[RMDB]
Chemical mapping of a 207-nucleotide RNA with DMS and 2A3.

RNA sequence: GGGAACGACUCGAGUAGAGUCGAAAAUACCGUCUUCCCCCCGACGGUUUCAAUCCAUAGCUUCACGUUGUGUAGCGUAGGUGGAAGGUAUCGUGUGGUGUAUAAACACCACAUAGUCUCUUAGGGGUCAAGCUGAUAAACUUCGGUUUAUCAGCAAUUCGUACAGUGUAUUCGUACACUGUACGAAAAAAGAAACAACAACAACAAC
Reactivity to DMS in 0.01 (KOAc 150mM, MgCl2 10mM, bicine 150mM(pH8.5), 24C), signal-to-noise 3, nucleotides 027 to 156: u000a070c000c000g000u000c010u010u000c030c000c020c010c020c120g010a020c020g010g000u000u000u000c060a060a160u000c010c000a130u000a150g010c020u000u010c020a030c040g010u000u010g010u000g030u000a060g010c030g020u010a050g040g060u010g010g000a060a060g020g030u000a040u010c040g040u000g010u010g010g030u010g030u010a150u010a170a160a100c000a010c000c000a000c000a000u000a030g010u000c020u000c020u000u010a090g000g000g040g010u010c070a080a160g020c000u000g000a020u000a010a010a010c000u000u000c300g060g020u000u000u000a000u010c010a000g010c000a010a020
Reactivity to 2A3 in 0.01 (KOAc 150mM, MgCl2 10mM, bicine 150mM(pH8.5), 24C), signal-to-noise 3, nucleotides 027 to 156: u050a010c000c000g000u010c020u120u150c010c000c000c000c000c000g000a000c000g010g030u000u040u080c040a030a050u010c000c010a030u050a050g010c000u030u020c020a020c050g300u300u240g010u060g030u060a020g010c040g030u040a070g000g100u030g030g040a030a050g060g030u090a070u130c040g000u000g000u000g010g000u010g050u010a100u090a290a180a020c000a000c000c000a000c010a000u010a000g030u000c010u000c000u100u150a060g000g000g020g030u040c070a080a020g000c000u000g000a000u000a000a000a000c000u030u070c090g110g010u000u000u000a000u000c000a000g010c010a000a010
DMS adducts were read by reverse transcription with MarathonRT. The reactions ran in a buffer of 150 mM KOAc, 10 mM MgCl2 and 150 mM bicine (pH 8.5), at 24 C.